[RMDB]
The record gives the reactivity of an RNA of 177 nucleotides to DMS and 2A3. The RNA was probed in 150 mM KOAc, 10 mM MgCl2 and 150 mM bicine (pH 8.5) at 24 C. Source: RMDB library OK2TST, as collected in RNAgym.
RNA sequence: GGGAACGACUCGAGUAGAGUCGAAAAACCGUAUCGAAUGCCGUCUUUUCAACAGCUUUACGAGAUACGUAAACAUGACCAUCAUCGAAGUCUUUGUAUAAUCCAGGUUUUCGAUGCGUAGGUUUGACUCACUAUUCACCUUCGGGUGAAUAGUGAGAAAAGAAACAACAACAACAAC
Reactivity to DMS in 0.01 (KOAc 150mM, MgCl2 10mM, bicine 150mM(pH8.5), 24C), signal-to-noise 2, nucleotides 027 to 126: a100c190c020g020u010a010u000c020g010a080a030u010g010c030c040g020u020c040u000u030u000u000c090a120a090c110a020g000c010u010u010u000a110c160g010a180g000a020u000a040c030g000u000a050a130a060c090a130u000g020a020c050c030a090u000c030a040u000c010g000a000a010g000u000c000u000u000u000g000u020a090u000a140a080u000c300c060a080g010g000u000u000u000u000c000g010a000u000g030c200g010u000a080g030g000u000u000u010g000a180
Reactivity to 2A3 in 0.01 (KOAc 150mM, MgCl2 10mM, bicine 150mM(pH8.5), 24C), signal-to-noise 2, nucleotides 027 to 126: a000c010c000g020u020a020u010c040g010a100a020u060g000c000c030g070u000c070u090u160u130u100c070a050a010c030a060g030c010u060u100u080a060c060g020a030g040a220u050a090c020g060u100a060a090a030c050a080u150g040a030c030c000a020u050c020a010u020c000g030a020a000g070u050c010u030u090u080g110u070a170u110a270a030u050c080c060a020g060g000u090u040u080u020c000g000a000u010g000c020g040u060a090g000g060u070u020u060g030a040